[RMDB]
RNA sequence: GGGAACGACUCGAGUAGAGUCGAAAACUUAUCGGCUGAUGAUACGGGCGAGCUGAUGCUAAUACAGCGGCCCUACAGGCCUGAAUCUACAACCGAGUAGGUGAUAUCGGGCUAAUUAUAAGCAUGGCCUGACUCGCAAUAAACCUAAACUCAUGAGCCCAGUCAUAUGGUUCGCCAUAUGACUGGGAAAAGAAACAACAACAACAAC
Reactivity to 2A3 in 0.01 (KOAc 150mM, MgCl2 10mM, bicine 150mM(pH8.5), 24C), signal-to-noise 2, nucleotides 027 to 156: c040u080u170a050u180c060g010g000c020u110g040a210u020g020a050u130a230c090g000g000g060c050g020a160g020c030u030g030a160u170g070c150u210a010a100u120a090c020a000g020c000g030g000c000c000c000u000a000c020a010g030g000c000c010u000g090a060a030u010c040u070a040c030a080a070c060c110g010a030g050u050a010g010g110u030g040a010u010a040u140c010g000g010g000c000u040a150a050u140u190a100u060a300a000g070c040a090u080g010g000c000c000u000g000a050c010u030c010g100c070a090a140u140a180a080a000c030c060u020a000a050a100c020u080c070a050u170g040a060g100